RNA sequence: GGGAACGACUCGAGUAGAGUCGAAAAAUACAAGGGGAGGUUUCGGGCAAAUGUUGUAUGCAGAAAGCGUGAGGAAGGUAGCACUUAGACACUCACGAGUAGCGGUUCGGCAGUAGUGCUAAAAUGAGACAGUACGAAAAGUUCGCUUUUCGUACAAUCAAAUGAAAGUCUUCGGACUUUCAUUUGAAAAAGAAACAACAACAACAAC
Reactivity to DMS in 0.01 (KOAc 150mM, MgCl2 10mM, bicine 150mM(pH8.5), 24C), signal-to-noise 2, nucleotides 027 to 156: a110u000a070c090a070a080g010g010g020g010a040g040g000u000u000u020c020g040g000g000c040a070a070a080u010g000u000u020g010u000a140u000g040c030a120g030a050a030a100g020c060g040u010g010a050g010g000a110a080g000g020u000a060g020c040a070c040u000u000a140g010a100c070a050c040u010c040a060c050g010a110g050u000a060g040c060g000g000u010u000c030g030g050c020a080g010u010a060g030u010g020c020u000a030a050a070a090u010g010a120g010a100c030a120g010u010a010c000g000a040a020a000a020g020u010u000c300g050c020u000u000u000u000c000g010u010a010c010a050a120
Reactivity to 2A3 in 0.01 (KOAc 150mM, MgCl2 10mM, bicine 150mM(pH8.5), 24C), signal-to-noise 3, nucleotides 027 to 156: a000u130a020c070a040a050g000g010g000g010a030g000g000u010u090u130c070g020g030g000c030a070a080a080u060g020u060u040g020u080a060u100g020c040a020g070a080a100a020g030c010g030u020g010a020g000g030a040a020g030g010u040a000g040c030a010c040u040u070a050g040a040c020a000c060u030c010a020c020g030a040g040u070a020g020c060g010g040u050u050c030g050g000c020a010g010u110a000g020u010g030c010u040a030a030a030a120u100g000a050g010a020c090a070g000u000a000c000g010a020a010a000a000g010u040u080c150g050c090u020u000u000u010c010g000u000a000c000a000a020

Source information: Structure probing data (DMS and 2A3) for a 207-nucleotide construct. Conditions: 150 mM KOAc, 10 mM MgCl2 and 150 mM bicine (pH 8.5), 24 C. For DMS, 4,747 sequencing reads were counted. For 2A3, 2,413 sequencing reads were counted.